Annotation
An RNA of 207 nucleotides, treated with DMS and 2A3 and read out base by base. The RNA was probed in 150 mM KOAc, 10 mM MgCl2 and 150 mM bicine (pH 8.5) at 24 C. 2A3 adducts were read by reverse transcription with SuperScript II with manganese. Values cover nucleotides 27 to 156. The 2A3 profile rests on 4,070 reads.
[RMDB]
RNA sequence: GGGAACGACUCGAGUAGAGUCGAAAAGUGAAAGCUCCUUCUCUCGCAAUGUGUAACUCAUGAUUCUCAUGACCCAUGGUUGGAGAGAUCCGGACUAGGAGCCAGGGGGCCUCUGAUUCUGCCAGCCAAAACUGUCGUAAGUUCGCUUACGACAGAAUCUCAUGUUAUACUUCGGUAUAACAUGAGAAAAAGAAACAACAACAACAAC
Reactivity to DMS in 0.01 (KOAc 150mM, MgCl2 10mM, bicine 150mM(pH8.5), 24C), signal-to-noise 2, nucleotides 027 to 156: g030u010g000a120a090a110g000c030u000c010c010u000u000c040u000c010u000c040g060c080a090a080u000g030u000g010u000a080a100c060u000c020a030u020g020a110u000u010c120u020c030a090u000g010a030c050c060c040a060u000g030g050u010u010g030g010a050g010a060g000a060u000c030c040g000g010a120c060u010a080g040g010a030g040c000c030a080g010g020g040g000g030c120c060u000c060u030g030a130u000u000c050u000g010c040c010a040g040c000c040a050a050a080a170c010u010g000u000c000g020u000a010a020g010u000u000c300g060c010u000u000a010c000g010a000c000a000g010a010a070
Reactivity to 2A3 in 0.01 (KOAc 150mM, MgCl2 10mM, bicine 150mM(pH8.5), 24C), signal-to-noise 5, nucleotides 027 to 156: g070u070g040a140a070a020g020c020u020c010c020u030u020c010u000c000u010c010g100c100a040a030u020g020u010g020u130a070a040c020u000c020a010u020g040a160u300u060c150u030c100a010u030g010a040c000c020c020a000u050g100g020u000u040g030g000a000g010a000g000a030u050c060c070g060g020a050c070u120a080g030g030a010g010c000c040a030g020g000g000g010g010c000c010u040c050u050g070a100u100u050c010u060g050c020c010a030g000c040c000a060a080a040a070c010u000g000u000c000g010u000a000a010g000u010u100c190g020c150u000u000a000c000g000a000c000a000g000a000a020